An RNA of 177 nucleotides, treated with DMS and read out base by base.
RNA sequence: GGGAACGACUCGAGUAGAGUCGAAAAGAUAUGGAUAAGGCACGGAGGUAUACUACGACGAUGGAGCGUGAUAUCGGAAACGAUAUACGCUCCAUCGUCGUAGUGCGAACGUGCUUAUCCUAAGUCAGAUUAGUUCAAUCUUCGGAUUGAACUAAUCAAAAGAAACAACAACAACAAC
Reactivity to DMS in 0.01 (KOAc 150mM, MgCl2 10mM, bicine 150mM(pH8.5), 24C), signal-to-noise 2, nucleotides 027 to 126: g010a050u000a300u010g000g010a020u000a010a010g030g010c000a010c010g000g010a140g020g020u000a110u010a110c000u000a010c000g010a020c000g000a050u000g010g010a030g000c000g000u030g000a030u000a010u000c010g000g000a170a100a220c010g030a010u000a000u010a010c000g010c000u000c010c010a010u000c000g000u000c000g000u000a000g020u000g010c030g000a080a180c020g010u000g010c000u000u000a010u000c000c000u000a030a120g010u010c060a130